An RNA of 207 nucleotides, treated with 2A3 and read out base by base. Conditions: 150 mM KOAc, 10 mM MgCl2 and 150 mM bicine (pH 8.5), 24 C. It was measured as part of the RMDB library RSTRND. The 2A3 profile rests on 395 reads. Values are in units of 0.01, from 0 to 300, in steps of 10.
RNA sequence: GGGAACGACUCGAGUAGAGUCGAAAAGCAUGGGCACGCCGUAAAACUACCCGCAAUCAAUAAACGCAAACAACGCAAACUACGCUCCCGCUUACGCCAAAGCUGCGUAAGUCUAACUCUUCGGAGCCGUCAAGCCUCACAAUGCUAACUAGUGGGGGAAAACGCCAAAGUUCGCUUUGGCGUUUUCAAAAGAAACAACAACAACAAC
Reactivity to 2A3 in 0.01 (KOAc 150mM, MgCl2 10mM, bicine 150mM(pH8.5), 24C), signal-to-noise 1, nucleotides 027 to 156: g030c040a070u080g000g010g000c030a040c110g100c030c110g030u020a000a000a140a070c080u180a100c020c050c000g020c030a010a080u130c050a070a110u060a180a190a000c050g000c070a000a190a000c020a000a050c080g040c040a000a000a150c050u140a030c060g000c040u040c000c010c000g020c000u160u010a110c010g000c000c000a300a220a030g040c180u190g020c010g000u000a000a000g000u000c010u040a000a090c000u050c050u110u040c030g010g000a000g010c020c000g050u010c040a060a000g020c000c000u000c020a000c000a000a090u180g050c010u120a180a000c000u050a180g030u040g030g000g000g000